The data come from the RNA Mapping Database (RMDB), library RFM100. The record gives the reactivity of an RNA of 177 nucleotides to DMS and 2A3. Reactivities are rounded to 0.1 and cut off at 0 and 3. For 2A3, 3,040 sequencing reads were counted. DMS adducts were read by reverse transcription with MarathonRT.
RNA sequence: GGGAACGACUCGAGUAGAGUCGAAAAUGUAGGGGUGAAAGGCCCAUCGAACCGGGCAACAGCUGGUUCCAACCGAAACAUGUCGAAGCAUGACCUCUGCCGAGGUAGUUCGUGGGGUAGAGCGACCACCAGUGAAUCCAUUCGUGGAUUCACUGGUAAAAGAAACAACAACAACAAC
Reactivity to DMS in 0.01 (KOAc 150mM, MgCl2 10mM, bicine 150mM(pH8.5), 24C), signal-to-noise 4, nucleotides 027 to 126: u000g000u000a050g020g000g040g000u000g000a070a100a110g010g000c060c010c030a050u030c120g020a020a040c080c000g000g000g000c040a180a080c240a080g000c060u010g010g000u000u020c030c150a090a120c060c020g010a110a050a170c100a030u010g000u000c060g000a100a160g040c050a050u010g020a140c000c000u000c000u030g010c080c060g010a070g000g010u000a080g000u000u000c020g010u010g040g010g000g010u010a060g000a100g000c050g000a060c110c100
Reactivity to 2A3 in 0.01 (KOAc 150mM, MgCl2 10mM, bicine 150mM(pH8.5), 24C), signal-to-noise 4, nucleotides 027 to 126: u150g030u090a080g000g000g000g010u060g080a060a040a060g090g020c000c000c000a020u050c030g000a010a030c030c020g010g030g000c050a130a050c010a160g080c010u040g000g010u030u000c030c010a080a050c030c020g070a040a070a010c040a030u090g040u080c140g120a070a010g030c060a060u080g040a020c000c010u020c030u050g070c040c040g030a030g030g030u070a060g030u020u040c080g030u100g000g030g000g020u080a040g010a020g100c010g030a030c010c000